[RMDB]
RNA sequence: GGGAACGACUCGAGUAGAGUCGAAAACAAUGCUUGAAUUUCCAGCCCAGCUAUAAUAGGCACCUGCCCAUUCAUCUGCAUGAUUUCCAAUGAAUAUGCAGUCCUGGACAUUCCAAUAGCCAUAAACCCGCGACUAGCGUUUCGACGCUAGUCGCGGAAAAGAAACAACAACAACAAC
Reactivity to 2A3 in 0.01 (KOAc 150mM, MgCl2 10mM, bicine 150mM(pH8.5), 24C), signal-to-noise 1, nucleotides 027 to 126: c030a000a090u190g040c070u020u110g020a040a040u030u010u060c030c010a000g000c060c010c010a000g000c000u010a020u090a300a060u070a060g030g010c030a000c000c010u010g000c000c000c000a000u080u100c000a030u060c000u050g000c040a050u000g030a160u170u030u210c060c000a030a000u210g060a000a120u080a000u060g090c000a000g030u060c000c060u080g000g000a040c020a110u020u010c000c000a080a140u040a050g000c000c000a060u170a090a050a090c000
The record gives the reactivity of an RNA of 177 nucleotides to 2A3. For 2A3 the reverse transcriptase was SuperScript II with manganese.